[RMDB]
RNA sequence: GGGAACGACUCGAGUAGAGUCGAAAAUAUUUGGCUGGCCAAGGCAUCUUCAACUCUUGGCUAGUCUCUCUAAGCUGGGAGAAUAAAUCUUAUCAGUCUUGAACAAUUUAAGUUCUGUUAUCCGAUCCUACUGGAGUUUGUUCGCAAACUCCAGUAGAAAAGAAACAACAACAACAAC
Reactivity to 2A3 in 0.01 (KOAc 150mM, MgCl2 10mM, bicine 150mM(pH8.5), 24C), signal-to-noise 4, nucleotides 027 to 126: u180a110u100u130u170g000g000c000u000g000g000c000c000a010a000g000g030c060a080u120c150u200u130c070a100a120c060u030c000u060u000g010g000c020u000a000g000u000c000u010c000u000c010u030a000a100g010c010u000g000g000g020a000g020a060a010u130a180a110a060u070c030u050u090a260u300c010a020g080u000c020u100u090g060a030a010c020a060a180u100u200u300a220a010g000u040u000c030u010g040u030u030a130u130c050c020g030a030u040c030
Reactivity to DMS in 0.01 (KOAc 150mM, MgCl2 10mM, bicine 150mM(pH8.5), 24C), signal-to-noise 1, nucleotides 027 to 126: u000a040u100u000u050g000g020c000u000g000g000c000c000a060a000g030g010c240a070u060c150u000u090c290a130a070c190u040c000u000u000g000g060c000u000a020g010u000c010u000c020u000c030u030a050a050g000c030u000g010g030g000a010g030a070a150u030a060a100a030u040c030u020u000a030u010c030a000g000u000c080u000u000g000a020a010c090a070a090u000u060u000a050a110g000u000u000c080u000g000u010u000a100u020c020c000g000a170u000c060